[RMDB]
RNA sequence: GGGAACGACUCGAGUAGAGUCGAAAACUGAUUCUGUAAUAAUCAGGACAGGCUAAACAUUUGCUAUAUUAAGACCAUGCAUGUGUUCCCAGAUCUAGUUCUUGCCUUACGUCUGGUUUUAUAAAUAAUCUGUUGUAAUAUUCGUAUUACAACAGAUAAAAGAAACAACAACAACAAC
Reactivity to 2A3 in 0.01 (KOAc 150mM, MgCl2 10mM, bicine 150mM(pH8.5), 24C), signal-to-noise 9, nucleotides 027 to 126: c010u020g020a210u030u000c010u010g030u020a070a180u070a150a050u250c000a000g000g010a010c010a010g040g030c060u120a080a080a020c030a080u050u060u080g030c030u090a040u040a070u290u110a150a040g030a050c030c020a030u070g000c000a000u030g030u010g010u060u020c000c000c000a010g030a070u040c060u060a030g050u100u010c010u030u080g020c010c000u030u060a040c050g050u020c030u030g010g050u020u030u030u050a160u060a050a120a050u170a040
Reactivity to DMS in 0.01 (KOAc 150mM, MgCl2 10mM, bicine 150mM(pH8.5), 24C), signal-to-noise 9, nucleotides 027 to 126: c020u000g010a090u000u000c060u010g010u010a120a080u030a100a090u010c000a010g010g010a050c060a040g000g000c070u010a080a080a060c060a050u010u010u000g010c040u000a060u010a070u000u010a070a080g010a110c220c060a040u000g010c030a020u000g010u000g000u000u000c030c010c020a120g000a070u010c080u020a080g000u010u010c030u000u000g010c030c010u010u010a070c180g000u010c040u000g000g010u000u000u000u010a060u010a060a060a090u020a080